[RMDB]
RNA sequence: GGGAACGACUCGAGUAGAGUCGAAAAGGUGGUGACGCCGAGGAGCGGGCCGCAGACUUCAUCAAGACCAACGUGUCCAAGCCGGUCGUCGGCUAUGUCGCCGGAUUUACCGCACCCGAAGGCAAGAGCCACUUACAAAGUUCGCUUUGUAAGUGGCAAAAGAAACAACAACAACAAC
Reactivity to DMS in 0.01 (KOAc 150mM, MgCl2 10mM, bicine 150mM(pH8.5), 24C), signal-to-noise 3, nucleotides 027 to 126: g000g030u000g020g020u000g000a090c080g000c010c020g000a110g000g010a130g010c030g010g020g010c020c050g000c230a160g020a080c020u000u010c150a050u000c290a110a110g000a100c060c070a080a070c190g010u000g010u000c020c060a130a140g020c040c010g000g010u010c110g000u000c010g010g010c020u010a030u010g030u000c030g020c100c040g010g000a150u000u020u010a080c000c010g000c120a150c030c000c010g000a110a090g010g000c070a070a110g010a270
Reactivity to 2A3 in 0.01 (KOAc 150mM, MgCl2 10mM, bicine 150mM(pH8.5), 24C), signal-to-noise 2, nucleotides 027 to 126: g050g010u040g000g070u020g010a020c060g000c020c020g000a030g020g000a070g040c030g030g090g010c050c000g070c050a050g010a030c010u090u030c100a150u110c090a120a020g050a080c020c010a110a140c140g060u110g000u140c000c000a030a010g010c000c010g040g070u140c040g090u020c010g020g000c040u070a140u160g020u010c000g000c050c010g000g000a030u100u090u110a050c000c020g020c040a100c010c020c010g050a090a040g080g020c030a050a010g020a010